[RMDB]
RNA sequence: GGGAACGACUCGAGUAGAGUCGAAAACUGCUUCUUUCCGUUCUAAAGAGCAAGUAUUAGCCUUGGCCGGAUGUGAUUUAUUAACAGUUUCUCCUAAAUUGUUAGACGAACUAAAGAAGGAUCAGUCCAACGACCAAUUGUUCGCAAUUGGUCGUUGAAAAGAAACAACAACAACAAC
Reactivity to DMS in 0.01 (KOAc 150mM, MgCl2 10mM, bicine 150mM(pH8.5), 24C), signal-to-noise 2, nucleotides 027 to 126: c040u010g020c060u000u000c000u010u000u010c070c080g020u010u000c020u000a050a090a060g020a160g010c020a090a090g010u000a210u010u010a130g010c040c020u010u000g000g040c300c040g020g000a030u010g020u020g010a120u010u010u020a100u040u000a050a030c020a000g010u000u000u000c180u010c070c050u010a080a020a060u000u000g000u000u000a020g000a110c120g000a040a050c090u020a020a080a040g000a070a060g000g000a050u000c030a100g000u020c090

Notes
Conditions: 150 mM KOAc, 10 mM MgCl2 and 150 mM bicine (pH 8.5), 24 C. The record gives the reactivity of an RNA of 177 nucleotides to DMS. DMS adducts were read by reverse transcription with MarathonRT.